[RMDB]
RNA sequence: GGGAACGACUCGAGUAGAGUCGAAAAGCCAUCGCUUUCGAGCGAUGGCAUUGCCCAAAGAGGACCUGGGGGUGUCUGGGCUGCUAAUCUCAUCAGCCGUUCUACCGCUAAAUUUCGAUUUAGCGAAGACUGGAAUUUGAUUCGUCAAAUUCCAGUCAAAAGAAACAACAACAACAAC
Reactivity to DMS in 0.01 (KOAc 150mM, MgCl2 10mM, bicine 150mM(pH8.5), 24C), signal-to-noise 3, nucleotides 027 to 126: g000c000c000a000u000c000g010c010u000u010u000c160g000a020g030c000g010a010u000g010g000c010a000u000u010g000c010c000c000a070a080a120g000a120g000g010a040c050c040u000g010g010g000g000g020u010g010u010c040u000g030g000g010c040u000g010c150u010a080a100u010c060u000c070a120u010c040a030g010c020c020g010u000u000c070u000a160c110c030g000c000u010a010a010a000u000u010u010c150g010a030u000u000u000a000g000c000g000a060a130
Reactivity to 2A3 in 0.01 (KOAc 150mM, MgCl2 10mM, bicine 150mM(pH8.5), 24C), signal-to-noise 2, nucleotides 027 to 126: g000c000c000a010u010c010g010c000u100u080u110c270g130a020g000c000g000a010u000g000g020c010a000u020u110g030c010c000c000a070a100a000g090a010g000g000a020c000c040u040g030g000g000g010g030u010g000u010c030u040g040g060g000c000u010g010c010u050a100a080u100c080u010c080a140u010c000a010g020c010c010g000u040u020c030u130a160c000c040g000c000u010a020a010a010u120u080u050c190g060a000u000u000u030a000g000c010g020a040a010